[RMDB]
RNA sequence: GGGAACGACUCGAGUAGAGUCGAAAAGGAGGCCUAUUUCACAUCCAGUGUGACUAUCGCUUGAUGGUCGAUAACCUGAUGGAUUUAACCCACGAGACCUAUGUUCAUUCAAGCAGUAUUGGGCAAACACGGUAUCCCGAUUCGUCGGGAUACCGUGAAAAGAAACAACAACAACAAC
Reactivity to DMS in 0.01 (KOAc 150mM, MgCl2 10mM, bicine 150mM(pH8.5), 24C), signal-to-noise 2, nucleotides 027 to 126: g010g010a140g050g020c030c050u000a090u000u000u000c070a060c040a050u010c060c170a040g030u000g030u020g000a070c120u010a020u000c010g010c240u020u030g010a010u000g020g010u000c000g000a090u000a020a140c060c020u000g000a060u000g020g000a060u000u000u020a060a120c050c020c020a090c100g010a100g000a050c040c050u000a090u000g000u000u030c050a100u000u000c040a050a060g040c050a100g010u000a090u000u000g000g000g020c090a050a050a250
Reactivity to 2A3 in 0.01 (KOAc 150mM, MgCl2 10mM, bicine 150mM(pH8.5), 24C), signal-to-noise 1, nucleotides 027 to 126: g120g050a110g030g020c070c060u080a140u030u140u080c110a130c000a010u000c040c040a030g020u050g000u020g100a040c050u050a060u120c050g080c280u070u260g000a000u000g000g030u040c030g020a100u010a090a030c020c030u050g000a070u050g030g000a010u060u030u090a110a080c020c010c010a050c070g000a020g080a030c000c080u090a120u070g090u000u050c020a070u070u080c030a050a070g000c020a030g060u090a130u130u090g030g020g100c000a040a070a000

About this RNA
Source: RMDB library OK2TST, as collected in RNAgym. Chemical mapping of a 177-nucleotide RNA with DMS and 2A3. For 2A3, 767 sequencing reads were counted. High DMS reactivity at an A or C suggests that its Watson-Crick edge is free. DMS adducts were read by reverse transcription with MarathonRT. Conditions: 150 mM KOAc, 10 mM MgCl2 and 150 mM bicine (pH 8.5), 24 C.